[RMDB]
The record gives the reactivity of an RNA of 177 nucleotides to DMS and 2A3.
The 2A3 profile rests on 2,839 reads.
RNA sequence: GGGAACGACUCGAGUAGAGUCGAAAAGAUAUGGAACACUGAGGGAGCCUGGUCGGAAACGACAUGGGCGACGAUCUCAAUGUUCCUAAGUCAAAGGAGGGUUACUUCUUCGGAAGUAACCCUCCAAGUUAGUGCUACUGUUCGCAGUAGCACUAACAAAAGAAACAACAACAACAAC
Reactivity to DMS in 0.01 (KOAc 150mM, MgCl2 10mM, bicine 150mM(pH8.5), 24C), signal-to-noise 2, nucleotides 027 to 126: g000a040u000a300u010g000g010a010a000c010a000c060u000g010a030g000g030g010a020g040c000c020u000g000g000u000c000g020g000a090a100a150c010g030a010c000a050u000g000g000g000c000g000a040c270g000a030u010c000u010c010a010a010u000g000u000u000c000c000u000a010a030g010u000c040a050a130a180g000g010a010g000g000g000u000u000a010c000u000u000c000u000u000c220g000g020a020a010g000u000a000a000c010c000c000u000c000c000a000a020
Reactivity to 2A3 in 0.01 (KOAc 150mM, MgCl2 10mM, bicine 150mM(pH8.5), 24C), signal-to-noise 1, nucleotides 027 to 126: g030a000u090a010u120g000g010a000a000c000a000c020u020g000a010g000g010g020a010g000c010c000u000g000g030u020c010g000g050a080a050a030c000g040a020c130a300u140g010g000g030c010g190a090c010g030a020u000c010u010c010a000a000u000g000u000u000c000c000u010a060a020g060u040c030a120a030a000g000g000a010g000g000g000u020u030a000c000u000u000c020u040u090c300g000g010a000a000g000u000a000a000c000c010c000u010c000c000a000a000

The DMS profile rests on 2,318 reads. The data come from the RNA Mapping Database (RMDB), library TTRDEL. Conditions: 150 mM KOAc, 10 mM MgCl2 and 150 mM bicine (pH 8.5), 24 C.